[RMDB]
RNA sequence: GGGAACGACUCGAGUAGAGUCGAAAAGAAAACCGGCUAGACCGUGAUAGUUAUAUGGUCAGAACGGGCGCUUGUCGCGUGCCGGGUCGGGGUUCAAUUCCCCGCCGCUAUCAAACAGCCGGAAAAACAUCAUGCCUGGAUUCGUCCAGGCAUGAUGAAAAGAAACAACAACAACAAC
Reactivity to 2A3 in 0.01 (KOAc 150mM, MgCl2 10mM, bicine 150mM(pH8.5), 24C), signal-to-noise 3, nucleotides 027 to 126: g120a000a060a000a010c000c010g000g040c030u050a040g020a060c090c110g090u020g000a010u010a010g030u210u040a100u010a040u240g150g070u130c100a070g060a090a010c020g000g020g000c000g000c010u170u300g090u300c080g010c010g010u140g300c000c000g000g020g010u030c000g000g000g010g000u030u020c010a010a000u030u010c000c000c010c000g000c000c000g000c000u010a020u020c000a020a020a050c030a010g000c000c000g000g000a110a000a000a000a000
Reactivity to DMS in 0.01 (KOAc 150mM, MgCl2 10mM, bicine 150mM(pH8.5), 24C), signal-to-noise 3, nucleotides 027 to 126: g000a150a040a110a000c000c000g000g010c000u000a110g010a110c100c040g030u030g000a000u000a020g000u020u060a140u010a090u020g010g020u080c200a110g050a100a170c000g030g000g040c000g000c000u020u030g000u030c220g000c000g000u000g060c000c020g010g000g000u060c030g000g000g000g000u000u000c060a100a300u030u000c000c000c000c000g000c030c000g020c000u010a030u000c050a020a160a050c140a130g020c000c000g010g010a010a060a010a080a120